Background:
An RNA of 207 nucleotides, treated with 2A3 and DMS and read out base by base. It was measured as part of the RMDB library OK3TST. The 2A3 profile rests on 626 reads. For DMS, 1,624 sequencing reads were counted.

[RMDB]
RNA sequence: GGGAACGACUCGAGUAGAGUCGAAAAAGAGACCACCAAAGACCUAGGACGUGCCCUUGGCAUGAUGGUCUAUGUAUUCAACUGUUCAGAGCAAAUGGACUACAAAGUAAGUUAGUAAGAGAAUAAUGUGUAAAACUUUAUUCUCUAACAUUAUUCAUAUGGUAUCACGAUUCGUCGUGAUACCAUAAAAAGAAACAACAACAACAAC
Reactivity to 2A3 in 0.01 (KOAc 150mM, MgCl2 10mM, bicine 150mM(pH8.5), 24C), signal-to-noise 2, nucleotides 027 to 156: a000g150a000g010a000c000c000a040c020c020a150a080a000g080a300c000c020u040a000g040g030a090c130g140u160g120c070c020c050u040u000g000g050c020a040u030g010a040u000g000g020u000c000u000a060u050g010u000a150u000u190c050a070a020c140u100g020u070u020c020a000g010a030g190c070a020a090a080u110g020g000a000c020u070a040c100a110a110a010g150u180a090a020g030u030u200a000g010u090a050a030g000a010g000a010a010u000a010a010u000g000u000g040u120a000a260a000a000c010u000u000u000a000u000u010c000u050c000u000a000a000c000a060u080u200a120u090u180c010a120
Reactivity to DMS in 0.01 (KOAc 150mM, MgCl2 10mM, bicine 150mM(pH8.5), 24C), signal-to-noise 1, nucleotides 027 to 156: a090g020a070g000a050c000c010a050c020c010a010a220a050g000a300c030c040u000a150g030g020a100c080g030u000g000c110c000c040u000u040g000g000c000a240u000g000a150u020g000g030u020c000u000a020u000g010u000a060u010u010c030a000a120c030u020g020u000u000c050a130g000a060g050c070a080a080a200u000g030g020a090c010u000a150c050a020a090a090g030u000a070a100g000u010u030a110g030u000a130a090g010a050g020a080a020u000a000a030u040g020u000g000u000a130a140a130a070c040u000u000u000a010u020u000c010u000c010u010a010a080c020a090u010u010a080u010u000c040a200